Structure probing data (DMS and 2A3) for a 177-nucleotide construct. The RNA was probed in 150 mM KOAc, 10 mM MgCl2 and 150 mM bicine (pH 8.5) at 24 C. The DMS profile rests on 1,990 reads. For 2A3 the reverse transcriptase was SuperScript II with manganese. DMS adducts were read by reverse transcription with MarathonRT.

[RMDB]
RNA sequence: GGGAACGACUCGAGUAGAGUCGAAAAGUGGAUAGUUUCGACUAUCCACACAACUGAUGAUCUUACAGUGGAGCAUGAAGAAGAUGGCCAUCGGAUCCUCAAAUAGCACAGAGUUCGCUCUGUGCAAUUCGUGGGUAUAUUUCGAUAUACCCACGAAAAAAGAAACAACAACAACAAC
Reactivity to DMS in 0.01 (KOAc 150mM, MgCl2 10mM, bicine 150mM(pH8.5), 24C), signal-to-noise 3, nucleotides 027 to 126: g020u000g000g000a020u000a010g010u000u000u060c190g010a030c000u000a000u000c000c000a000c000a050c180a050a070c110u000g000a050u000g010a030u010c050u000u020a150c130a130g000u000g010g010a100g000c020a020u000g000a090a120g010a110a080g000a040u000g020g000c050c020a030u000c080g000g000a080u000c030c040u000c080a060a090a090u000a120g000c000a010c000a000g000a020g030u000u010c260g010c010u000c020u000g000u020g040c000a020a030
Reactivity to 2A3 in 0.01 (KOAc 150mM, MgCl2 10mM, bicine 150mM(pH8.5), 24C), signal-to-noise 3, nucleotides 027 to 126: g000u000g000g000a010u000a000g010u020u070u100c160g030a020c000u000a000u000c000c000a000c000a000c000a010a000c030u080g010a030u040g020a020u040c010u030u160a090c050a110g040u030g060g020a050g140c050a060u090g050a050a150g060a040a010g070a110u070g020g020c020c000a010u040c040g020g000a030u000c000c000u060c030a090a100a060u200a050g000c010a000c000a010g010a010g010u040u040c120g090c060u000c000u010g000u000g000c000a000a010